[RMDB]
RNA sequence: GGGAACGACUCGAGUAGAGUCGAAAACGCUGAGGAUACCUCAUGGCGCAAUGGGACAGCAUCGAACGGAAGGGCUCCAAGUAGUGGUGAAUCCACAGACGUUAGAAGAGCUGCAUUCGGAUGAAUGAUCAACUCAACCGUUCGCGGUUGAGUUGAUAAAAGAAACAACAACAACAAC
Reactivity to DMS in 0.01 (KOAc 150mM, MgCl2 10mM, bicine 150mM(pH8.5), 24C), signal-to-noise 1, nucleotides 027 to 126: c080g000c020u000g010a130g000g000a120u010a140c010c000u020c000a070u020g010g030c030g010c040a040a090u030g010g010g000a220c010a020g010c030a020u010c030g000a000a070c050g010g020a040a080g010g080g000c000u020c000c030a050a040g000u010a070g000u010g000g000u020g020a270a150u010c020c090a050c000a050g010a070c030g000u000u030a070g000a110a070g000a050g070c050u020g010c040a050u000u000c010g010g030a040u030g030a000a040u080g020
Reactivity to 2A3 in 0.01 (KOAc 150mM, MgCl2 10mM, bicine 150mM(pH8.5), 24C), signal-to-noise 2, nucleotides 027 to 126: c030g000c060u000g050a030g040g030a060u090a300c000c010u000c100a050u150g050g040c000g040c050a000a090u100g000g010g020a030c000a030g000c000a050u040c060g020a000a060c050g000g020a070a050g070g020g000c000u000c000c000a120a000g060u060a070g020u050g020g000u050g130a010a050u040c000c000a010c000a030g080a010c100g040u050u010a010g000a120a000g080a080g000c010u040g050c030a100u000u120c010g170g000a100u240g080a090a110u020g010